RNA sequence: GGGAACGACUCGAGUAGAGUCGAAAAGACACGCUUCGCAGAUGACCUCCUCGUUGGUGAGUGUCGGUAAUGUUGUCAGUCACAGGCAACAGUUAACGAUCUGCUUAAAUAAAAAGAGAAGAACAAACCUAUCCAUCGUAUUCGUACGAUGGAUAGGAAAAGAAACAACAACAACAAC
Reactivity to 2A3 in 0.01 (KOAc 150mM, MgCl2 10mM, bicine 150mM(pH8.5), 24C), signal-to-noise 5, nucleotides 027 to 126: g000a020c040a010c020g050c050u120u130c060g010c040a000g010a100u040g030a030c010c000u050c000c020u060c010g130u150u140g020g020u050g050a020g020u060g030u010c010g000g020u110a100a060u020g000u000u000g000u000c020a020g120u100c060a050c040a130g000g000c000a000a000c000a030g030u010u060a020a020c010g010a020u000c010u030g010c000u030u070a080a130a050u220a040a070a010a030a010g180a010g040a130a020g040a080a000c040a080a030a030
Reactivity to DMS in 0.01 (KOAc 150mM, MgCl2 10mM, bicine 150mM(pH8.5), 24C), signal-to-noise 4, nucleotides 027 to 126: g020a040c020a020c050g000c060u010u030c100g030c020a000g010a030u010g000a080c000c000u000c090c010u020c090g000u020u000g000g010u000g000a070g010u010g010u010c000g010g000u000a110a110u000g000u000u010g000u000c000a090g010u050c290a180c260a090g000g000c030a010a000c010a010g000u030u010a000a030c060g000a020u010c020u000g010c000u000u030a020a140a120u100a050a050a050a080a120g000a070g010a100a080g010a080a130c190a090a040a140